[RMDB]
Annotation:
Conditions: 150 mM KOAc, 10 mM MgCl2 and 150 mM bicine (pH 8.5), 24 C. The record gives the reactivity of an RNA of 177 nucleotides to DMS and 2A3. It was measured as part of the RMDB library TTRDES. The DMS profile rests on 1,419 reads. For 2A3, 2,341 sequencing reads were counted. Reactivities are given for positions 27 through 126.
RNA sequence: GGGAACGACUCGAGUAGAGUCGAAAAGAUAUGGAUCGAUCACCGUCAUCGACGAAGUGGGAUCGGAAACGAUCCCACAGAGAUGGCGGUGAGUCGAUCCUAAGUCAAAGACUGGUUCGCCAGUCAACUCCUUUAGUUCCUUCGGGAACUAAAGGAGAAAAGAAACAACAACAACAAC
Reactivity to DMS in 0.01 (KOAc 150mM, MgCl2 10mM, bicine 150mM(pH8.5), 24C), signal-to-noise 2, nucleotides 027 to 126: g000a090u000a300u000g030g010a010u000c000g000a090u000c000a000c000c010g070u000c000a000u000c000g000a280c210g010a030a150g010u030g010g000g030a000u000c000g030g010a150a070a150c010g030a020u000c010c020c010a000c000a000g000a150g000a010u000g010g000c010g030g010u020g000a010g000u000c000g020a010u020c000c000u000a010a070g000u000c030a090a100a120g000a000c000u030g040g000u000u010c220g020c010c010a010g040u000c040a080a170
Reactivity to 2A3 in 0.01 (KOAc 150mM, MgCl2 10mM, bicine 150mM(pH8.5), 24C), signal-to-noise 1, nucleotides 027 to 126: g030a020u090a070u250g030g000a000u000c010g050a010u000c020a000c010c010g070u040c030a020u010c010g300a300c050g060a270a000g000u000g020g000g030a000u000c000g020g000a050a050a010c000g000a000u000c000c000c000a010c000a010g000a000g000a000u000g000g000c000g000g010u000g010a000g000u000c020g000a000u010c000c000u000a010a010g020u000c040a050a040a140g000a010c000u000g000g060u090u120c300g030c070c000a010g000u000c000a000a060